RNA sequence: GGGAACGACUCGAGUAGAGUCGAAAAAUCAGCCUUCGUUCUGUAAACGGGGUUGGAUCCGACUCUCAUAUGCUCUCCAACCCAACUCCUACUCAAUACGUCCUCGUCGUACAGAACGGUAACAUGUAAAACGAAGGCUGCUUCGGCAGCCUUCGAAUCAGUUAAGCAAGUUCGCUUGCUUAACUGAAAAAGAAACAACAACAACAAC
Reactivity to DMS in 0.01 (KOAc 150mM, MgCl2 10mM, bicine 150mM(pH8.5), 24C), signal-to-noise 1, nucleotides 027 to 156: a090u000c020a100g020c030c020u000u010c010g040u000u000c030u010g000u010a110a120a090c040g020g000g000g000u000u000g010g010a110u000c050c010g030a050c010u000c130u010c110a130u000a090u000g030c040u000c120u000c000c040a080a100c000c010c010a130a090c020u000c010c000u000a100c010u010c080a060a180u000a090c090g030u010c060c010u010c040g010u000c000g030u000a090c030a070g000a030a010c030g000g000u020a080a040c050a110u010g000u000a020a070a120a190c050g000a030a010g000g000c000u000g000c000u000u000c240g080g000c010a020g020c020c000u000u000c000g000a010a040
Reactivity to 2A3 in 0.01 (KOAc 150mM, MgCl2 10mM, bicine 150mM(pH8.5), 24C), signal-to-noise 3, nucleotides 027 to 156: a020u050c030a030g060c000c010u080u120c010g010u010u000c010u040g070u050a020a040a110c040g000g000g000g010u030u000g020g000a020u080c040c020g040a050c000u010c000u020c090a140u090a070u290g010c000u000c000u000c030c010a040a030c020c010c010a030a080c080u080c000c020u050a150c040u040c120a110a140u060a120c030g120u140c010c030u050c020g050u020c000g020u020a020c010a010g020a020a000c000g000g010u050a070a010c060a080u150g080u220a040a100a000a050c000g000a000a010g000g000c000u000g000c000u020u030c070g060g000c000a000g020c000c020u000u000c000g000a000a000

Overview
Source: RMDB library M2RFPK, as collected in RNAgym. The record gives the reactivity of an RNA of 207 nucleotides to DMS and 2A3. In probing experiments dimethyl sulfate is read out at A N1 and C N3, which are open when not base-paired. Reactivities are given for positions 27 through 156. The RNA was probed in 150 mM KOAc, 10 mM MgCl2 and 150 mM bicine (pH 8.5) at 24 C. For DMS the reverse transcriptase was MarathonRT. The DMS profile rests on 2,556 reads.